Chemical mapping of a 177-nucleotide RNA with 2A3 and DMS.
It was measured as part of the RMDB library TTRDES.
The RNA was probed in 150 mM KOAc, 10 mM MgCl2 and 150 mM bicine (pH 8.5) at 24 C.
For DMS the reverse transcriptase was MarathonRT.
For 2A3 the reverse transcriptase was SuperScript II with manganese.
RNA sequence: GGGAACGACUCGAGUAGAGUCGAAAAGAUAUGGAGAGAGGUAUGGAGCUUGGACCCAGGAUCGGAAACGAUCCUGGCUAGCUCUGUACUCUCUCCUAAGUCAAAGAUCCGACUUCGGUCGGAUCAACAUCAGCACAUACUUCGGUAUGUGCUGAUGAAAAGAAACAACAACAACAAC
Reactivity to 2A3 in 0.01 (KOAc 150mM, MgCl2 10mM, bicine 150mM(pH8.5), 24C), signal-to-noise 1, nucleotides 027 to 126: g020a030u070a040u160g020g010a000g000a000g010a020g120g170u070a000u020g020g000a020g020c030u100u130g170g110a140c010c020c040a000g010g000a000u010c010g020g100a040a070a020c000g010a000u000c010c010u000g040g030c000u000a000g000c010u030c000u000g000u000a000c000u000c000u000c000u030c000c000u000a000a010g000u000c020a060a000a050g020a000u000c000c000g000a000c000u050u110c300g100g000u000c010g030g000a010u010c000a010a000
Reactivity to DMS in 0.01 (KOAc 150mM, MgCl2 10mM, bicine 150mM(pH8.5), 24C), signal-to-noise 2, nucleotides 027 to 126: g020a060u000a300u010g000g000a030g010a010g010a020g010g010u000a000u000g000g010a000g010c000u000u030g050g020a120c300c000c020a020g000g000a010u010c000g010g000a140a060a280c000g010a020u000c000c000u000g000g000c040u000a010g000c000u000c010u000g020u000a010c000u000c000u000c000u000c000c000u000a000a070g000u000c040a110a110a190g000a010u000c000c000g010a010c010u000u040c220g060g040u000c000g000g010a000u000c010a070a160